[RMDB]
RNA sequence: GGGAACGACUCGAGUAGAGUCGAAAAUGCCAUUUGUAAAGGUUCAAUCUUUACAGAAGCUGUGGCACAGGUGGCCUAAGGUGAAGUGAGAUGGACCAUUUACACAAAUUUGAGACAUGCCUACGGCGCACAUGAUCAAGUUCGCUUGAUCAUGUGCAAAAGAAACAACAACAACAAC
Reactivity to DMS in 0.01 (KOAc 150mM, MgCl2 10mM, bicine 150mM(pH8.5), 24C), signal-to-noise 2, nucleotides 027 to 126: u000g010c020c020a120u000u000u000g010u000a000a040a000g000g030u000u010c060a080a130u000c000u000u010u000a030c020a040g020a280a100g000c020u000g020u000g000g020c030a050c010a170g020g010u010g000g040c020c020u040a180a060g030g000u010g030a300a180g020u000g000a020g010a030u010g010g020a010c010c000a080u000u010u010a030c030a060c190a040a030a160u020u000u000g020a130g040a090c040a020u000g010c040c010u000a030c160g000g000c100
Reactivity to 2A3 in 0.01 (KOAc 150mM, MgCl2 10mM, bicine 150mM(pH8.5), 24C), signal-to-noise 3, nucleotides 027 to 126: u070g030c010c000a050u060u020u100g000u010a020a020a000g010g020u000u020c040a130a270u030c150u020u180u260a000c010a020g000a020a020g040c020u020g000u040g050g100c020a020c030a140g160g300u300g160g000c020c000u060a200a060g090g200u060g010a040a000g040u010g000a000g000a010u010g010g000a000c000c070a090u020u000u030a020c020a000c040a030a150a080u140u150u100g090a140g010a040c020a070u050g000c010c000u110a080c120g120g000c030
Source information:
Chemical mapping of a 177-nucleotide RNA with DMS and 2A3. The DMS profile rests on 1,462 reads. Values cover nucleotides 27 to 126. For DMS the reverse transcriptase was MarathonRT. The reactions ran in a buffer of 150 mM KOAc, 10 mM MgCl2 and 150 mM bicine (pH 8.5), at 24 C.